[RMDB]
RNA sequence: GGGAACGACUCGAGUAGAGUCGAAAAACGGGCAGUGGCGAUGGCAACGCGGCAGCCGCAGGGUCGACUUCUUCGCAGCCGCAACAGACGGGAAACGGGCAAAGAGGGGCUCUCGUUCUGUUGGAAGCUCCAGUCCAUAUUUCGAUAUGGACUGGAGAAAAGAAACAACAACAACAAC
Reactivity to DMS in 0.01 (KOAc 150mM, MgCl2 10mM, bicine 150mM(pH8.5), 24C), signal-to-noise 2, nucleotides 027 to 126: a120c100g030g000g000c030a060g050u000g010g010c050g010a070u000g000g010c110a110a110c180g000c000g030g000c090a060g000c020c040g090c160a060g010g000g030u010c020g020a040c050u010u020c070u000u000c070g010c080a110g020c000c010g070c020a070a030c050a010g000a090c040g000g000g020a030a030a100c050g020g000g040c030a020a150a100g000a100g000g000g010g020c050u000c020u010c010g010u020u000c030u000g010u000u000g000g050a050a100g000
Reactivity to 2A3 in 0.01 (KOAc 150mM, MgCl2 10mM, bicine 150mM(pH8.5), 24C), signal-to-noise 4, nucleotides 027 to 126: a000c020g020g020g000c030a050g040u050g070g000c020g050a090u100g030g030c020a060a040c070g000c010g050g000c010a010g020c010c030g010c040a040g040g020g010u050c020g040a050c030u060u020c000u040u040c040g000c050a030g030c020c010g010c000a010a010c010a010g030a000c020g000g020g000a010a110a040c020g000g060g000c050a080a110a030g060a080g030g030g000g000c000u000c000u010c010g040u160u010c020u020g020u000u010g010g010a040a020g020